[RMDB]
RNA sequence: GGGAACGACUCGAGUAGAGUCGAAAAUGAGCUGGCUGGGGCAGAUUCACAGACACCUUGACUCUGAGGUGCCCUUAUUGCACAUCAUGUCAACCCACAUGGUACAUGGGGCCCUGCCUCUUGUAUCCGAAGUAAUAGCCUUCGGGCUAUUACUUCGAAAAGAAACAACAACAACAAC
Reactivity to 2A3 in 0.01 (KOAc 150mM, MgCl2 10mM, bicine 150mM(pH8.5), 24C), signal-to-noise 2, nucleotides 027 to 126: u050g000a010g050c130u040g030g000c020u010g000g000g040g020c000a020g080a300u090u090c040a020c000a060g050a050c020a050c050c100u130u170g060a090c040u000c060u080g010a030g050g000u010g000c000c000c000u060u160a230u080u150g000c020a030c000a040u040c000a000u030g040u010c060a060a070c000c060c010a020c030a110u170g030g000u020a010c000a020u030g020g010g000g000c000c150c160u140g000c010c010u000c000u020u030g020u020a020u000c000
Reactivity to DMS in 0.01 (KOAc 150mM, MgCl2 10mM, bicine 150mM(pH8.5), 24C), signal-to-noise 3, nucleotides 027 to 126: u000g000a040g040c180u000g000g010c030u000g020g010g000g000c010a030g010a150u020u000c060a020c170a060g030a080c060a050c140c080u010u010g010a080c080u000c100u000g000a060g000g020u000g000c000c030c020u000u000a070u000u010g010c060a060c050a080u000c010a010u000g000u010c200a080a100c020c000c020a130c220a090u020g000g000u000a010c010a010u000g010g010g010g010c010c200c240u010g000c000c010u000c010u000u000g010u000a040u010c010
The record gives the reactivity of an RNA of 177 nucleotides to 2A3 and DMS. For 2A3, 2,085 sequencing reads were counted.